[RMDB]
RNA sequence: GGGAACGACUCGAGUAGAGUCGAAAAAUUCAUUUAGUAGCAGGCACAGGGGCAGCUCCGGCACGGCUUUCUCAGGCCUAUGCCGGAGCCUCGAGGGCUGGAGAGCGGGAAGACAGGCAGUGCUCGGUCGAGGCUAAAAAUUCGUUUUUAGCCUCGAAAAAGAAACAACAACAACAAC
Reactivity to DMS in 0.01 (KOAc 150mM, MgCl2 10mM, bicine 150mM(pH8.5), 24C), signal-to-noise 2, nucleotides 027 to 126: a140u000u010c060a060u020u010u000a100g010u000a150g010c060a050g000g010c060a070c120a110g000g000g010g030c180a120g000c050u000c000c010g000g000c010a040c300g000g020c030u000u000u000c150u010c160a190g000g010c010c020u000a090u000g000c020c000g000g000a010g000c000c050u010c070g000a120g020g010g020c050u010g000g010a040g010a140g020c130g010g000g000a090a070g000a080c130a060g000g010c060a090g030u000g000c020u020c040g000g010